[RMDB]
RNA sequence: GGGAACGACUCGAGUAGAGUCGAAAACAUUCGGACAGCGCGGGUCAUACCGCACAGGCGGCUCCACUACAUCCAUCGUUGAAUAUGUGCGGGUGGCAUCGUGGAGUGCCACCGUCACUGGAGGCUCGGCCGUAGUCCGAUUCGUCGGACUACGGCCAAAAGAAACAACAACAACAAC
Reactivity to 2A3 in 0.01 (KOAc 150mM, MgCl2 10mM, bicine 150mM(pH8.5), 24C), signal-to-noise 1, nucleotides 027 to 126: c030a090u020u150c140g040g060a000c030a080g000c090g000c000g050g030g070u010c080a110u040a130c000c000g000c000a010c000a040g000g070c000g000g060c000u040c000c060a010c000u040a000c000a020u020c020c020a060u080c040g050u030u200g070a110a150u100a070u230g040u030g070c160g040g050g000u000g000g000c060a010u060c050g090u230g000g160a080g000u000g040c000c000a070c030c020g130u160c030a010c030u010g030g090a040g000g010c020u040c090
Chemical mapping of a 177-nucleotide RNA with 2A3. The reactions ran in a buffer of 150 mM KOAc, 10 mM MgCl2 and 150 mM bicine (pH 8.5), at 24 C. Reactivities are given for positions 27 through 126.